The record gives the reactivity of an RNA of 207 nucleotides to 2A3.

[RMDB]
RNA sequence: GGGAACGACUCGAGUAGAGUCGAAAACAGGGAUUUCAACCUUUACAAGACAUCAUGAUGUGCAGUAAUACCUUGAUUAAAUAUAUUCAGUAACUCCUUAAUAAAAACAUCAAGCUGGGUGAAGGUAGGGUCUGCUUUGUAAAGCCAGAAUUAGGGAGGUAGGCUAAUGGUUCGCCAUUAGCCUACCAAAAGAAACAACAACAACAAC
Reactivity to 2A3 in 0.01 (KOAc 150mM, MgCl2 10mM, bicine 150mM(pH8.5), 24C), signal-to-noise 1, nucleotides 027 to 156: c010a000g000g000g100a100u080u120u120c050a040a030c010c020u040u000u080a060c110a100a060g030a030c050a090u130c090a080u110g140a070u100g070u040g070c060a010g000u180a070a020u110a130c020c000u000u000g020a010u230u000a030a140a000u060a010u040a030u080u060c020a000g030u030a110a060c030u070c090c010u070u000a000a000u090a080a160a010a030a000c030a020u060c010a040a040g000c000u030g030g000g000u000g030a010a000g000g020u030a020g060g000g100u030c000u000g010c000u050u060u060g050u140a030a000a000g040c020c040a030g050a060a090u120u160a120g080g010g000a030

The data come from the RNA Mapping Database (RMDB), library OK3TST.